[RMDB]
RNA sequence: GGGAACGACUCGAGUAGAGUCGAAAAAAAAGAGGCAUUCACUCAAUAUGUGACGGUGUUUUAUAUAUUUACGUUAACACUAUUGCUGUGGCUUUUGACGGCCUUUUAAUAAAAUUGCUGUCGCACCCCGAGAGUGUCACUUCGGUGACACUCUCGGAAAAGAAACAACAACAACAAC
Reactivity to 2A3 in 0.01 (KOAc 150mM, MgCl2 10mM, bicine 150mM(pH8.5), 24C), signal-to-noise 1, nucleotides 027 to 126: a000a010a010a000g170a040g040g000c120a110u300u300c000a010c030u000c000a000a000u050a010u060g030u000g000a050c000g050g000u050g140u000u100u240u000a130u020a090u000a000u040u160u070a070c020g000u000u080a170a000c010a000c150u010a020u170u080g090c110u000g000u000g000g000c000u010u090u030u160g010a060c040g000g000c000c020u030u140u040u000a180a030u080a000a020a020a070u140u180g000c000u000g000u000c000g000c000a100c000c000